[RMDB]
RNA sequence: GGGAACGACUCGAGUAGAGUCGAAAACAACACGUCUUCGGACGUGUUGAAACGUGGUGCGUACGAUAACGCAUAUUAAGCCCAAGACAAGCAGGGCAAAAAAAACAACCAGCUUCGGCUGGUUGAAGAGUACUUAAGUGUUCGCACUUAAGUACUCAAAAGAAACAACAACAACAAC
Reactivity to DMS in 0.01 (KOAc 150mM, MgCl2 10mM, bicine 150mM(pH8.5), 24C), signal-to-noise 3, nucleotides 027 to 126: c010a020a010c000a000c000g010u000c000u000u000c190g040g010a010c000g020u010g000u000u010g010a040a040a200c000g000u000g010g020u000g010c020g000u000a040c000g010a070u020a020a050c030g010c010a010u010a060u010u010a080a130g010c010c000c000a050a160g020a300c190a110a100g000c170a110g020g000g020c040a000a000a000a030a020a020a090a090c010a010a010c000c010a010g000c000u000u010c190g010g000c000u000g000g020u010u000g000a030a090
Reactivity to 2A3 in 0.01 (KOAc 150mM, MgCl2 10mM, bicine 150mM(pH8.5), 24C), signal-to-noise 3, nucleotides 027 to 126: c000a000a000c000a000c020g010u000c010u040u050c180g130g010a000c000g010u010g000u010u000g000a000a000a010c020g010u040g090g020u020g040c000g000u010a020c030g040a110u020a040a030c010g000c000a000u000a020u020u060a070a010g000c000c000c030a030a040g180a120c120a100a050g100c090a140g000g000g000c000a020a050a000a010a000a000a010a010c000a000a000c010c000a000g010c000u040u110c130g170g000c000u010g000g000u000u000g000a000a000
This 177-nucleotide RNA was probed chemically with DMS and 2A3. 2A3 adducts were read by reverse transcription with SuperScript II with manganese. The RNA was probed in 150 mM KOAc, 10 mM MgCl2 and 150 mM bicine (pH 8.5) at 24 C.